[RMDB]
RNA sequence: GGGAACGACUCGAGUAGAGUCGAAAAAGAUCCACGCUACGGCGUGGAUCACACGUUCAUCCCUAUUGGGACGGAAGUAGGCAUCGUGCCGAAGGAACGCAUUAGUCAUGCGCUACGGCGCAUGACACACAUCAGAGUCACUUCGGUGACUCUGAAAGUAGCCUAGAGGGUUCGCCCUCUAGGCUACAAAAGAAACAACAACAACAAC
Reactivity to 2A3 in 0.01 (KOAc 150mM, MgCl2 10mM, bicine 150mM(pH8.5), 24C), signal-to-noise 1, nucleotides 027 to 156: a000g030a000u000c000c000a010c000g000c000u070a000c250g130g000c000g030u000g000g000a000u000c000a010c000a000c020g000u010u000c000a010u030c030c000c000u190a300u150u300g030g000g030a020c070g020g040a020a060g000u030a000g000g000c010a050u110c260g200u300g010c000c000g000a000a000g050g000a020a020c030g030c070a040u110u080a030g000u000c000a000u010g000c000g000c000u050a010c300g060g000c000g030c010a000u000g000a000c000a000c000a000c000a060u020c000a000g000a000g000u000c000a000c030u050u090c160g140g000u030g030a000c000u000c000u000g000a000a000a000